An RNA of 207 nucleotides, treated with 2A3 and DMS and read out base by base. High DMS reactivity at an A or C suggests that its Watson-Crick edge is free. For DMS, 5,068 sequencing reads were counted.
RNA sequence: GGGAACGACUCGAGUAGAGUCGAAAAGAAAGUUCAAGCAAGCUAGCCGGCAAAAAAGCAAACUUGACCACCAAGGAUAAAAGAGAUCUUAUCCAAGGAUGCAAAAGAUAAUCUAACUUUUGACACCAAAACAGGGAGUAGUUCGCUACUCCCUGAACUAAUACGUCAUGUUCGCAUGACGUAUUAGAAAAGAAACAACAACAACAAC
Reactivity to 2A3 in 0.01 (KOAc 150mM, MgCl2 10mM, bicine 150mM(pH8.5), 24C), signal-to-noise 5, nucleotides 027 to 156: g040a020a070a000g000u040u030c050a030a000g020c010a050a050g000c020u050a020g030c010c050g080g000c130a050a080a060a050a020a010g040c040a050a030a010c020u020u040g020a040c020c020a030c010c020a060a040g010g000a010u030a030a050a020a020g080a010g000a040u030c020u030u020a000u020c010c020a020a030g040g010a050u060g000c000a010a030a010a020g020a070u120a130a060u170c070u100a020a070c020u010u030u020u050g070a080c030a040c070c050a030a060a050a100c010a010g000g000g000a010g000u010a010g000u040u070c180g020c080u000a000c000u060c010c000c000u000g000a000a000
Reactivity to DMS in 0.01 (KOAc 150mM, MgCl2 10mM, bicine 150mM(pH8.5), 24C), signal-to-noise 3, nucleotides 027 to 156: g010a090a060a070g020u010u000c030a060a090g000c020a020a180g020c030u010a300g020c000c010g010g030c040a000a080a100a120a160a030g030c020a070a090a020c000u000u000g020a140c120c010a130c010c030a030a300g000g000a040u010a000a040a060a030g020a220g000a150u010c030u010u000a030u010c020c010a030a220g000g020a080u000g030c020a010a030a080a050g000a160u000a050a120u000c100u010a070a060c010u000u000u000u000g000a200c050a080c030c040a060a020a060a110c020a010g020g010g000a020g000u000a000g000u000u000c250g010c010u000a000c000u000c000c000c000u000g000a000a060